[RMDB]
RNA sequence: GGGAACGACUCGAGUAGAGUCGAAAACGGGGUUGCAUGCGCGGGCGCACCAUGUAUGUGGUGCCGUUCUGUAUGGGACCGCUGGGCGCCGAGGACCCCAAACUUGGUGUGGAGAUCACCGACUCCGCGGAUAAAUCCUUUUCGAAGGAUUUAUCCGAAAAGAAACAACAACAACAAC
Reactivity to DMS in 0.01 (KOAc 150mM, MgCl2 10mM, bicine 150mM(pH8.5), 24C), signal-to-noise 3, nucleotides 027 to 126: c110g000g010g000g010u000u000g020c030a050u010g010c030g030c150g000g000g000c020g020c000a010c020c000a010u000g020u030a070u040g050u000g010g010u000g010c090c080g040u000u000c010u030g010u020a000u000g000g010g000a010c000c010g000c050u010g010g000g010c000g000c000c010g000a030g000g010a060c020c010c020c010a060a060a060c040u000u020g000g020u000g010u040g000g000a050g000a090u010c060a160c080c070g000a140c000u000c000c010g000
Reactivity to 2A3 in 0.01 (KOAc 150mM, MgCl2 10mM, bicine 150mM(pH8.5), 24C), signal-to-noise 7, nucleotides 027 to 126: c040g040g000g000g050u020u120g140c030a040u050g020c110g010c110g030g020g010c020g000c000a040c000c010a020u120g220u240a100u300g030u070g000g000u010g020c070c020g010u040u000c020u040g040u050a030u050g000g010g040a010c010c010g040c050u070g030g060g020c020g000c000c000g010a020g000g030a100c000c020c000c000a050a050a020c010u010u040g010g000u020g050u070g050g010a030g030a110u130c050a040c190c020g050a060c000u000c010c010g030